[RMDB]
RNA sequence: GGGAACGACUCGAGUAGAGUCGAAAAGAAUAUAAGAGCGCAGUAAGUGUGAGAGCAAACUGCGCCCGGACUGUAGGAUCCGGUGGCACAGCAACGCUCACUCACAACACGCUGUGCCACAUGAAGAGGUACUAUACUCGUUCGCGAGUAUAGUACCAAAAGAAACAACAACAACAAC
Reactivity to DMS in 0.01 (KOAc 150mM, MgCl2 10mM, bicine 150mM(pH8.5), 24C), signal-to-noise 3, nucleotides 027 to 126: g000a160a070u040a070u020a100a080g000a120g000c000g000c000a000g000u000a030a290g000u010g000u000g020a120g040a070g060c020a090a240a060c020u010g000c010g000c020c000c000g000g000a020c030u020g000u020a150g000g050a290u000c010c030g020g000u000g000g000c000a000c000a010g020c000a100a110c120g000c000u010c040a080c090u100c170a130c300a070a090c130a080c160g010c010u000g000u000g010c020c000a010c000a050u000g020a110a120g020a230
Reactivity to 2A3 in 0.01 (KOAc 150mM, MgCl2 10mM, bicine 150mM(pH8.5), 24C), signal-to-noise 7, nucleotides 027 to 126: g030a060a010u170a010u050a090a020g030a010g000c000g000c000a000g020u090a150a040g030u090g010u010g110a040g000a000g040c030a040a040a050c000u010g000c000g000c000c000c000g000g000a010c030u150g110u280a070g050g080a070u000c000c010g010g000u010g000g000c000a000c000a000g000c010a060a100c050g020c020u010c010a050c010u130c020a130c040a060a120c070a020c120g000c000u000g000u000g000c000c000a010c010a020u140g060a080a030g080a040